Notes:
Chemical mapping of a 207-nucleotide RNA with 2A3 and DMS. Reactivities are given for positions 27 through 156. For 2A3, 4,407 sequencing reads were counted.

RNA sequence: GGGAACGACUCGAGUAGAGUCGAAAACGCUGGGCGUAUGGAGGACCUAUAAGGGAGCUGAAGCGCGCACGGCGACGAUCUUAUCAGGUUGAAGUACGCCUGUGCUGAAGCGCGCACGGCAACCGAAAGGUGCGAAGCCCUCAUUUCGAUGAGGGAAAUAAAGCAUAUAAUUCGUUAUAUGCUUUAUAAAAGAAACAACAACAACAAC
Reactivity to 2A3 in 0.01 (KOAc 150mM, MgCl2 10mM, bicine 150mM(pH8.5), 24C), signal-to-noise 4, nucleotides 027 to 156: c040g020c040u050g000g010g020c000g030u020a020u060g150g170a250g190g100a020c000c000u010a030u000a050a020g020g010g000a000g000c010u050g040a130a030g010c000g000c000g000c020a030c020g000g020c020g020a070c020g030a030u020c000u030u050a040u090c230a020g020g070u060u100g150a220a020g040u020a010c030g030c000c010u000g020u040g000c010u080g030a080a030g000c000g000c010g000c010a010c020g100g000c050a120a070c010c010g060a080a030a020g020g000u000g010c040g040a060a040g030c010c010c000u010c000a030u070u210u100c210g100a010u010g000a010g000g000g000a010a030
Reactivity to DMS in 0.01 (KOAc 150mM, MgCl2 10mM, bicine 150mM(pH8.5), 24C), signal-to-noise 4, nucleotides 027 to 156: c050g040c030u000g030g010g020c020g000u000a020u010g010g020a240g020g000a050c010c010u000a090u000a030a090g020g020g010a140g050c010u010g010a070a120g020c020g000c000g010c010a300c030g020g000c010g010a070c130g010a060u000c010u000u000a050u000c130a060g030g020u000u000g000a140a270g020u000a020c010g010c000c010u000g030u000g000c050u000g010a150a040g010c030g030c020g000c000a140c030g000g010c030a100a300c020c010g000a050a120a160g010g010u000g010c010g000a110a120g010c000c000c000u000c000a020u000u000u010c240g010a070u010g010a020g010g040g000a020a090
DMS adducts were read by reverse transcription with MarathonRT.